The record gives the reactivity of an RNA of 177 nucleotides to 2A3 and DMS. For 2A3, 3,215 sequencing reads were counted.
RNA sequence: GGGAACGACUCGAGUAGAGUCGAAAAUGUUUGCAGCAUCAGAAAUGCUGAGUCAUAUUCCAAACUUGGGCCGCAAGGAUGAUCACCCGGAAUAGGCUGCAUCAGGCGGUGAUAAUAACCGGUGCUAAGUUCCUACUGAAUUCGUUCAGUAGGAACUAAAAGAAACAACAACAACAAC
Reactivity to 2A3 in 0.01 (KOAc 150mM, MgCl2 10mM, bicine 150mM(pH8.5), 24C), signal-to-noise 3, nucleotides 027 to 126: u050g040u040u100u230g060c040a000g000c000a010u040c060a050g180a110a220a000u040g000c000u000g010a020g030u020c010a000u020a090u100u040c020c000a010a070a090c080u070u070g040g090g000c010c010g040c070a080a080g140g010a050u060g010a030u080c010a030c010c030c000g000g050a060a040u090a070g040g000c040u020g030c020a020u020c020a030g130g000c030g050g000u060g050a060u050a240a030u080a050a010c020c020g010g020u040g050c000u030a060
Reactivity to DMS in 0.01 (KOAc 150mM, MgCl2 10mM, bicine 150mM(pH8.5), 24C), signal-to-noise 5, nucleotides 027 to 126: u010g010u000u010u020g010c010a010g010c010a030u010c110a160g010a140a150a100u010g000c010u010g000a060g010u010c030a040u010a160u000u000c020c010a090a090a080c110u000u000g000g010g010c010c020g010c040a060a120g000g010a060u000g010a110u000c050a080c100c010c020g000g010a080a070u010a070g000g020c070u000g010c020a050u010c070a060g010g010c060g010g010u000g010a050u000a070a090u000a100a110c090c020g010g000u000g000c100u010a070